[RMDB]
Record summary
Structure probing data (2A3 and DMS) for a 177-nucleotide construct. Conditions: 150 mM KOAc, 10 mM MgCl2 and 150 mM bicine (pH 8.5), 24 C. For DMS the reverse transcriptase was MarathonRT. It was measured as part of the RMDB library M2PK50.

RNA sequence: GGGAACGACUCGAGUAGAGUCGAAAAGCUGAGAAAUUCGUUUCUCAGCACUGGAAAUAAAGCCGAAAGGCUAGCCUUUCCUUAUUUGGCGAAAGCCUGGCAUGAGCCUCCACUUCGGUGGAGGCAAACUGAGUUGGUUAUUCGUAACCAACUCAGUAAAAGAAACAACAACAACAAC
Reactivity to 2A3 in 0.01 (KOAc 150mM, MgCl2 10mM, bicine 150mM(pH8.5), 24C), signal-to-noise 2, nucleotides 027 to 126: g000c000u010g010a000g000a010a060a010u120u090c170g050u030u030u000c010u000c010a000g010c000a010c030u010g030g060a060a060a080u100a120a140a000g030c000c000g090a090a050a000g000g000c000u010a040g000c020c040u030u060u050c020c000u070u140a240u160u190u090g010g000c020g040a100a040a000g010c000c030u010g090g030c090a060u140g050a040g040c000c000u000c000c000a020c010u010u070c270g060g000u000g000g000a030g010g000c000a010a000
Reactivity to DMS in 0.01 (KOAc 150mM, MgCl2 10mM, bicine 150mM(pH8.5), 24C), signal-to-noise 3, nucleotides 027 to 126: g000c000u000g010a020g010a000a000a040u000u030c190g010u000u000u000c000u000c000a010g010c010a030c130u000g010g010a020a040a040u000a130a170a060g010c000c010g000a140a090a140g010g020c010u000a020g010c180c160u000u000u000c020c020u010u010a070u010u000u020g010g020c010g010a110a100a120g020c000c000u010g010g000c170a100u010g000a170g000c000c000u000c010c010a010c000u000u030c150g020g040u000g000g000a010g000g000c010a000a010